[RMDB]
RNA sequence: GGGAACGACUCGAGUAGAGUCGAAAAUACAGCGACUUUCGAGUCGCUGUAAAAAAACCGUAGGGAUGGAGCGAUAAGUCGUGGUUCGAAAGAGCCAUACGACUUUUGACGCUCCGCCCUAAACGGAAAAAGUUCAUGUACUUCGGUACAUGAACAACACUAAGGCUAGCUUCGGCUAGCCUUAGUGAAAAGAAACAACAACAACAAC
Reactivity to DMS in 0.01 (KOAc 150mM, MgCl2 10mM, bicine 150mM(pH8.5), 24C), signal-to-noise 1, nucleotides 027 to 156: u000a020c000a000g000c000g080a040c010u000u000u000c270g020a030g060u000c020g070c000u000g000u030a000a000a140a060a030a040a120c020c010g030u000a100g010g000g010a030u020g000g010a000g040c000g000a250u000a020a000g010u000c000g010u030g020g020u000u000c000g020a220a050a190g000a000g000c010c000a070u000a010c020g000a020c000u000u000u010u000g050a300c020g030c010u000c000c010g000c020c020c000u000a000a040a080c000g040g000a030a040a100a070a080g000u000u000c000a010u010g020u000a020c010u000u000c300g020g010u020a000c000a010u000g000a010a020c000a110a070